The record gives the reactivity of an RNA of 207 nucleotides to DMS and 2A3. The reactions ran in a buffer of 150 mM KOAc, 10 mM MgCl2 and 150 mM bicine (pH 8.5), at 24 C. For 2A3, 3,989 sequencing reads were counted. For DMS, 2,737 sequencing reads were counted.
RNA sequence: GGGAACGACUCGAGUAGAGUCGAAAACGACCCCCUGACGGGUCGGACAUAGCGUCAGGAUCAUCCGUGGCAGUCACCACGGUAAUCAUGUGUCUGAUGAUGGUUUUCCAUCUUAAUCUGACUGCGUCGUAGCAGUCUACAGUACUAUGACAUUAGACCAUACUAUGGCUUUCGAGCCAUAGUAUGGAAAAGAAACAACAACAACAAC
Reactivity to DMS in 0.01 (KOAc 150mM, MgCl2 10mM, bicine 150mM(pH8.5), 24C), signal-to-noise 1, nucleotides 027 to 156: c000g000a150c010c000c000c020c000u030g000a060c010g090g050g030u000c000g030g030a090c090a080u000a110g030c020g040u010c000a140g000g000a060u010c070a060u000c000c010g050u000g000g010c040a240g020u000c210a300c010c010a000c000g020g030u000a000a010u010c040a140u010g000u000g010u000c040u000g030a100u010g010a080u000g030g010u000u000u000u000c040c040a030u000c010u000u000a070a110u000c100u000g010a050c020u020g030c040g010u000c250g030u000a130g030c000a040g010u000c020u020a050c070a180g000u000a050c030u010a030u000g000a060c000a180u000u000a110g000a210
Reactivity to 2A3 in 0.01 (KOAc 150mM, MgCl2 10mM, bicine 150mM(pH8.5), 24C), signal-to-noise 4, nucleotides 027 to 156: c010g020a010c000c000c000c000c000u020g010a000c010g000g000g010u030c030g010g050a070c090a110u170a030g090c010g010u000c000a010g010g010a060u160c050a060u080c010c000g010u000g000g030c080a090g070u050c050a040c040c000a000c000g010g000u010a000a070u050c030a030u060g030u010g120u070c010u020g080a090u060g010a000u000g040g040u040u140u270u110c010c000a020u000c000u040u160a120a090u080c080u060g010a000c000u000g010c020g070u150c090g010u100a020g000c000a000g000u000c010u020a020c000a020g030u010a050c030u070a020u060g020a010c010a060u060u100a040g040a030
For DMS the reverse transcriptase was MarathonRT.